[RMDB]
RNA sequence: GGGAACGACUCGAGUAGAGUCGAAAAGAUAUGGACUUCUCCCAAUGCAACAGCUCGGAAACGAGACAUGCAUACCAGGGAGAGAGUCCUAAGUCAAAAGCCCGAUGAACUUCGGUUCAUCGGGCAAGUAGUACUGGAUGUUCGCAUCCAGUACUACAAAAGAAACAACAACAACAAC
Reactivity to DMS in 0.01 (KOAc 150mM, MgCl2 10mM, bicine 150mM(pH8.5), 24C), signal-to-noise 2, nucleotides 027 to 126: g020a030u020a300u020g010g000a030c000u000u000c000u010c000c010c010a160a050u010g000c000a020a120c260a100g000c000u000c000g000g000a090a070a180c000g000a010g020a040c100a170u010g000c000a050u000a100c230c260a100g010g000g020a020g000a020g020a040g020u000c010c010u000a010a070g000u020c040a120a200a150a240g000c000c000c000g100a010u000g010a020a030c000u000u010c220g000g010u000u000c000a000u000c000g020g030g010c020a000a000
Reactivity to 2A3 in 0.01 (KOAc 150mM, MgCl2 10mM, bicine 150mM(pH8.5), 24C), signal-to-noise 1, nucleotides 027 to 126: g000a040u040a020u120g020g000a000c000u020u020c000u040c010c010c000a060a140u080g000c000a120a100c040a300g020c000u000c020g030g020a080a030a040c020g020a000g090a050c010a080u040g000c020a000u070a240c090c100a140g020g000g030a030g030a000g060a010g000u010c010c010u010a070a010g040u060c040a080a040a250a200g020c000c010c040g000a020u030g020a000a030c160u110u260c300g100g000u000u000c060a000u000c000g040g000g040c000a010a010